[RMDB]
RNA sequence: GGGAACGACUCGAGUAGAGUCGAAAACGUCCGCGUACAGAAACUGGGCCCACUCGGAGACGAAGGCCCGCGUCCACGCGAGAACAAAUGACGCGAUCUGGGACGGGUAGCGGUUGUUGGCAAUGAGUGGCGUUGACUUCUCCAGGGUGUGCAAACAGAAUACAAGGUCAUUCGUGACCUUGUAUUCAAAAGAAACAACAACAACAAC
Reactivity to DMS in 0.01 (KOAc 150mM, MgCl2 10mM, bicine 150mM(pH8.5), 24C), signal-to-noise 1, nucleotides 027 to 156: c060g030u010c010c060g050c060g080u000a220c070a100g010a110a120a140c080u000g040g030g040c020c000c030a160c000u000c050g010g000a300g000a120c100g020a130a100g000g040c030c000c000g010c030g020u010c020c030a090c000g000c030g030a080g050a110a300c040a100a040a160u000g010a260c000g000c000g000a110u000c050u010g000g090g020a160c030g020g000g010u010a050g010c040g060g010u000u020g000u000u000g020g020c060a060a120u010g000a110g030u000g000g040c080g000u010u000g000a070c070u010u000c010u000c000c090a140g010g000g020u010g000u000g010c030a000a050a180c090a250
Reactivity to 2A3 in 0.01 (KOAc 150mM, MgCl2 10mM, bicine 150mM(pH8.5), 24C), signal-to-noise 2, nucleotides 027 to 156: c050g100u070c000c030g000c000g030u070a140c030a120g120a120a220a080c100u190g020g000g000c080c010c080a090c010u000c010g060g030a060g010a120c030g010a060a060g060g000c000c000c000g000c000g030u000c050c010a030c020g040c010g050a110g050a170a070c120a100a090a070u180g080a030c030g000c010g010a050u030c040u110g010g030g020a030c040g060g010g000u020a020g090c000g020g000u010u040g000u000u000g050g020c070a110a100u060g000a050g060u060g020g020c030g010u030u010g070a120c050u110u030c020u090c020c050a060g000g030g000u100g030u060g030c010a060a110a040c110a120
An RNA of 207 nucleotides, treated with DMS and 2A3 and read out base by base. DMS adducts were read by reverse transcription with MarathonRT. Reactivities are given for positions 27 through 156. The data come from the RNA Mapping Database (RMDB), library OK3TST. The RNA was probed in 150 mM KOAc, 10 mM MgCl2 and 150 mM bicine (pH 8.5) at 24 C.